[RMDB]
RNA sequence: GGGAACGACUCGAGUAGAGUCGAAAAGCAUGAAGAUAUCAAACACGAGGGAAGUCCGGACUACAAACAGUGCCGACAUGGUUGUGUGUCAAAACAGAUUAUGUCUUGCAGAUUUGUGAAAUGCUCCGUGCUUCCUCUUAUUCGUAAGAGGAAGCACAAAAGAAACAACAACAACAAC
Reactivity to DMS in 0.01 (KOAc 150mM, MgCl2 10mM, bicine 150mM(pH8.5), 24C), signal-to-noise 3, nucleotides 027 to 126: g010c050a080u010g020a090a040g020a070u020a140u000c200a220a060a090c140a060c050g010a100g010g000g010a120a040g010u050c030c010g000g000a040c000u030a130c150a070a090a060c090a060g010u000g010c000c300g000a010c080a060u010g000g030u010u000g000u010g040u000g000u020c270a080a070a050a040c050a010g030a060u000u000a000u000g000u000c010u000u020g010c060a120g010a130u000u000u060g000u000g010a000a080a050u010g000c130u000c070c120
Reactivity to 2A3 in 0.01 (KOAc 150mM, MgCl2 10mM, bicine 150mM(pH8.5), 24C), signal-to-noise 4, nucleotides 027 to 126: g060c020a010u060g080a080a060g120a140u070a040u120c120a100a120a030c070a010c100g050a070g080g070g060a060a110g030u000c010c000g030g030a020c020u060a040c070a030a120a000c020a090g180u060g120c020c040g030a040c000a050u090g050g000u070u040g150u040g000u020g010u110c050a000a000a030a070c010a010g040a040u050u070a010u150g000u000c000u000u110g000c000a040g050a290u010u070u020g020u040g050a100a040a060u030g050c050u090c040c020
Annotation
This 177-nucleotide RNA was probed chemically with DMS and 2A3. For 2A3, 1,707 sequencing reads were counted.